Chemical mapping of a 177-nucleotide RNA with DMS and 2A3. Source: RMDB libraries RFM100 and RFMREP, as collected in RNAgym. Conditions: 150 mM KOAc, 10 mM MgCl2 and 150 mM bicine (pH 8.5), 24 C.
RNA sequence: GGGAACGACUCGAGUAGAGUCGAAAAUUUCGGAGCGGAGGAUAUGGAACGCGGCUUCGAGCGAGAUCGUGAAACUUCGCCGUCGGGCGAAGGGAAGCGAAGGUUCGACUGGAAGCCGAAAGGCGGACCUAAAUCAUGAAUUCGUUCAUGAUUUAGGAAAAGAAACAACAACAACAAC
Reactivity to DMS in 0.01 (KOAc 150mM, MgCl2 10mM, bicine 150mM(pH8.5), 24C), signal-to-noise 9, nucleotides 027 to 126: u010u020u020c090g010g000a070g010c090g000g000a060g010g010a130u010a070u010g000g010a100a070c160g010c000g000g000c010u000u000c000g010a020g000c020g000a040g000a090u000c000g000u000g000a030a300a220c000u000u000c000g020c000c010g010u040c300g010g000g010c000g000a010a010g000g000g010a300a260g000c010g000a020a060g010g020u020u000c010g010a100c010u000g000g000a020a010g000c010c000g000a010a020a050g010g010c080g000g010a230
Reactivity to 2A3 in 0.01 (KOAc 150mM, MgCl2 10mM, bicine 150mM(pH8.5), 24C), signal-to-noise 9, nucleotides 027 to 126: u080u100u100c050g020g010a040g000c030g020g100a040g030g010a050u050a070u240g040g020a060a020c040g000c000g050g000c000u000u010c020g080a000g000c000g000a010g010a040u030c000g000u010g020a030a000a020c000u000u000c000g000c020c020g160u280c210g130g020g000c000g000a000a000g000g000g000a010a000g000c010g010a020a010g130g090u050u010c010g070a140c210u030g080g000a000a000g000c000c000g010a010a000a000g020g010c030g000g010a020